[RMDB]
RNA sequence: GGGAACGACUCGAGUAGAGUCGAAAAUAGAGCAUUUUCGAGCCAAAAGUGUGAAACGGUUUGCGUUGGAAAAUGCGACAAAACAAAUAGUUAGAGCGGUUCCGGCGAUUCUGUUAAAAUAGAAACAGAUUUACUUUUAGUUCGCUAAAAGUAAAUCAAAAGAAACAACAACAACAAC
Reactivity to DMS in 0.01 (KOAc 150mM, MgCl2 10mM, bicine 150mM(pH8.5), 24C), signal-to-noise 5, nucleotides 027 to 126: u000a090g020a300g000c010a010u000u000u010u010c010g010a030g020c020c010a030a030a200a150g010u000g010u020g010a110a130a070c080g010g010u000u000u000g010c130g000u000u000g020g000a010a010a010a020u000g010c010g010a130c150a050a080a080a090c110a080a070a090u000a100g010u010u000a080g000a140g000c040g010g000u000u000c020c020g010g020c030g020a080u000u000c020u000g000u000u000a050a050a070a120u010a070g000a080a060a050c140a090
Reactivity to 2A3 in 0.01 (KOAc 150mM, MgCl2 10mM, bicine 150mM(pH8.5), 24C), signal-to-noise 3, nucleotides 027 to 126: u130a000g090a010g010c000a000u000u020u010u000c030g040a000g000c010c000a040a010a030a020g080u050g010u090g190a300a120a060c050g030g010u030u030u040g020c060g030u010u020g060g020a000a000a020a020u010g000c010g020a020c030a000a100a030a010c040a000a130a050u110a080g070u110u070a030g020a010g050c030g000g020u030u030c010c000g000g000c010g010a040u060u000c010u020g040u050u050a080a130a060a090u110a100g060a010a090a000c030a030
Record summary
Chemical mapping of a 177-nucleotide RNA with DMS and 2A3. It was measured as part of the RMDB library OK2TST. For 2A3 the reverse transcriptase was SuperScript II with manganese. The DMS profile rests on 5,393 reads. For DMS the reverse transcriptase was MarathonRT.